Record summary: Chemical mapping of a 177-nucleotide RNA with DMS and 2A3. The RNA was probed in 150 mM KOAc, 10 mM MgCl2 and 150 mM bicine (pH 8.5) at 24 C.
RNA sequence: GGGAACGACUCGAGUAGAGUCGAAAAGUCAUUAACCCGUGUGCACUCUCUAACACGAAUUACCCAGUUAUUUUCGACUUUACUCGAGUCGUUAUAGCGUGAUAUGAGAGAGUAAUCCGCGACCAAAGUACAAUAUGAGUUUCGACUCAUAUUGUACAAAAGAAACAACAACAACAAC
Reactivity to DMS in 0.01 (KOAc 150mM, MgCl2 10mM, bicine 150mM(pH8.5), 24C), signal-to-noise 4, nucleotides 027 to 126: g020u010c190a110u010u010a040a050c050c090c040g040u010g020u000g000c110a060c010u010c010u000c020u000a250a020c000a010c010g000a150a120u010u010a110c050c090c080a170g010u000u000a030u000u000u000u000c000g000a020c000u000u000u000a000c010u000c000g000a000g000u000c000g000u000u000a010u000a090g020c000g010u020g010a020u000a070u010g020a040g010a040g000a030g020u010a150a110u000c020c000g000c010g000a130c030c020a070a090a130
Reactivity to 2A3 in 0.01 (KOAc 150mM, MgCl2 10mM, bicine 150mM(pH8.5), 24C), signal-to-noise 1, nucleotides 027 to 126: g030u040c030a060u070u160a040a020c080c050c000g010u000g000u010g010c040a030c070u030c000u010c000u030a030a010c000a000c020g020a080a130u110u050a080c020c020c000a010g020u020u060a090u030u020u000u000c000g000a000c000u020u010u030a010c010u000c000g000a010g000u000c000g000u000u000a020u000a000g000c000g040u130g030a010u010a010u080g050a020g000a000g000a000g000u010a010a110u000c010c010g020c000g000a000c000c000a100a070a000